[RMDB]
RNA sequence: GGGAACGACUCGAGUAGAGUCGAAAAUAUUGCUGGACAGCUCGACGAUUCAUGGAGCCAUCAAGGAUUACCCCUCAAAUGGUGUCAAUUUCCGGUCGACAGAUCUCAGAGAGAACCUCAGCGGCCCACAAUGGAAACUCUUCGGAGUUUCCAUUGUAAAAGAAACAACAACAACAAC
Reactivity to 2A3 in 0.01 (KOAc 150mM, MgCl2 10mM, bicine 150mM(pH8.5), 24C), signal-to-noise 7, nucleotides 027 to 126: u240a070u060u180g030c010u010g000g020a030c030a060g030c040u020c010g040a040c030g040a080u120u050c050a100u220g040g000a010g030c010c010a020u050c030a040a030g030g000a030u060u240a130c020c030c030c010u050c040a130a170a080u100g010g010u030g080u090c040a050a060u050u050u010c030c020g050g000u060c030g020a030c020a030g060a080u030c030u060c140a030g050a000g000a010g010a110a040c020c020u060c020a020g000c000g020g030c000c000c000
Reactivity to DMS in 0.01 (KOAc 150mM, MgCl2 10mM, bicine 150mM(pH8.5), 24C), signal-to-noise 4, nucleotides 027 to 126: u020a060u000u020g010c020u000g000g020a060c180a120g020c040u000c020g010a180c120g000a120u020u010c100a090u020g000g000a200g000c020c020a040u010c080a170a070g000g010a120u000u050a110c210c050c000c020u020c100a100a100a050u010g030g010u010g000u020c100a020a080u010u020u030c040c060g000g010u000c050g000a090c140a090g010a080u010c090u000c030a090g010a200g010a050g000a060a110c100c050u010c020a070g000c060g000g000c000c000c050